[RMDB]
RNA sequence: GGGAACGACUCGAGUAGAGUCGAAAACUAGCCACCAUUGGCGCUUGACGUGCUUGACACACUGGUACCGGGCGCGCCUGUAUUAGUAGCUGGUGGCGGGGUGACCGGGCGGGCGGUACUGGCGGCAGAUAUUAUGGUCGUUCGCGACCAUAAUAUCAAAAGAAACAACAACAACAAC
Reactivity to 2A3 in 0.01 (KOAc 150mM, MgCl2 10mM, bicine 150mM(pH8.5), 24C), signal-to-noise 3, nucleotides 027 to 126: c030u020a040g000c000c010a020c010c020a070u040u100g080g000c030g020c020u100u120g070a100c050g020u040g020c020u080u120g060a070c020a010c020a020c230u020g010g030u030a030c030c010g020g140g040c060g000c000g050c020c000u060g020u030a160u100u150a120g070u060a020g050c040u020g010g000u030g040g000c060g000g030g010g030u100g040a070c060c050g030g000g030c070g020g040g020c040g040g030u030a060c040u040g030g000c030g000g010c030a010
Reactivity to DMS in 0.01 (KOAc 150mM, MgCl2 10mM, bicine 150mM(pH8.5), 24C), signal-to-noise 3, nucleotides 027 to 126: c050u010a150g010c000c020a020c020c020a150u010u010g010g010c010g020c040u000u010g020a100c150g020u010g000c020u000u000g030a150c110a080c100a110c110u000g020g000u010a030c060c040g020g000g010c070g020c030g010c010c000u000g010u000a090u010u000a070g020u010a080g020c080u000g010g010u010g000g040c040g010g020g010g010u000g020a110c070c030g000g000g020c120g010g000g000c040g010g010u010a090c100u000g000g010c060g010g000c090a110